About this RNA:
The record gives the reactivity of an RNA of 177 nucleotides to DMS and 2A3. Values are in units of 0.01, from 0 to 300, in steps of 10. The data come from the RNA Mapping Database (RMDB), library OK1LIB. For DMS, 3,848 sequencing reads were counted. The reactions ran in a buffer of 150 mM KOAc, 10 mM MgCl2 and 150 mM bicine (pH 8.5), at 24 C.

[RMDB]
RNA sequence: GGGAACGACUCGAGUAGAGUCGAAAAGCGUCGAUGCUAGGGAUAACACACGCACACACAGAAACCUAGCAUCGAUGGAAAAUAAAAAUGUGUGUGGGUGUGGAAAGCGGAAACGCGAAAAUAAAAAGGGAAUAGAUUAGUUCGCUAAUCUAUUCCCAAAAGAAACAACAACAACAAC
Reactivity to DMS in 0.01 (KOAc 150mM, MgCl2 10mM, bicine 150mM(pH8.5), 24C), signal-to-noise 2, nucleotides 027 to 126: g000c020g030u000c000g040a000u000g000c000u000a000g050g000g000a090u100a090a020c020a010c000a010c020g000c070a010c010a000c000a020c010a000g010a070a070a030c020c020u000a010g000c000a000u010c000g010a000u000g000g030a100a020a150a060u030a010a090a120a070a080u000g000u000g000u000g010u000g000g000g050u030g030u010g000g000a060a080a140g000c030g000g000a090a080a160c010g000c000g010a040a070a060a080u070a020a050a040a170a100
Reactivity to 2A3 in 0.01 (KOAc 150mM, MgCl2 10mM, bicine 150mM(pH8.5), 24C), signal-to-noise 7, nucleotides 027 to 126: g150c020g000u000c000g010a010u000g000c000u000a000g010g040g050a130u250a300a020c030a000c010a000c020g190c050a000c010a000c000a000c010a040g300a070a070a040c000c000u010a000g000c000a010u000c000g000a000u000g000g050a010a030a010a030u300a050a030a030a010a010u170g010u000g000u000g010u000g000g040g000u010g010u010g000g060a100a090a020g010c030g020g040a060a050a040c010g000c060g040a020a090a030a040u300a030a080a010a030a020